[RMDB]
An RNA of 177 nucleotides, treated with DMS and 2A3 and read out base by base. The DMS profile rests on 15,731 reads. For 2A3, 8,484 sequencing reads were counted. DMS (dimethyl sulfate) methylates the pairing face of unpaired adenines and cytosines.
RNA sequence: GGGAACGACUCGAGUAGAGUCGAAAAUCGUGAGAUGUGGUGCCUCACGCGCUCGAGGCGUCCGUGGUCAGAGAGACCACUGACGCAAAAACUCGAGCGCAAAUAAAGUGCAUUACAUUCAGAAUAAAUACUGGAUAUUAUUCGUAAUAUCCAGUAUAAAAGAAACAACAACAACAAC
Reactivity to DMS in 0.01 (KOAc 150mM, MgCl2 10mM, bicine 150mM(pH8.5), 24C), signal-to-noise 5, nucleotides 027 to 126: u030c070g020u000g000a050g000a030u000g010u000g000g020u000g010c010c000u010c180a110c200g010c010g020c000u000c000g000a010g000g010c000g020u000c010c080g000u000g010g010u000c000a130g020a180g020a220g000a010c000c010a000c010u000g010a000c000g010c020a020a020a060a100a300c000u010c000g000a000g010c010g010c000a000a030a080u030a060a070a020g010u030g010c000a000u000u010a000c000a040u000u000c030a110g010a080a060u050a050a110
Reactivity to 2A3 in 0.01 (KOAc 150mM, MgCl2 10mM, bicine 150mM(pH8.5), 24C), signal-to-noise 5, nucleotides 027 to 126: u100c040g030u070g070a170g010a050u020g000u010g020g000u000g000c000c000u040c010a080c120g000c000g000c000u000c000g000a000g000g000c000g000u000c000c000g000u000g000g000u000c040a040g110a060g010a020g000a300c000c000a000c000u000g000a000c000g000c000a110a100a020a030a020c010u010c000g000a000g000c000g000c000a000a000a000u140a030a080a010g080u100g030c000a000u010u010a000c000a010u030u040c010a010g100a100a080u200a090a120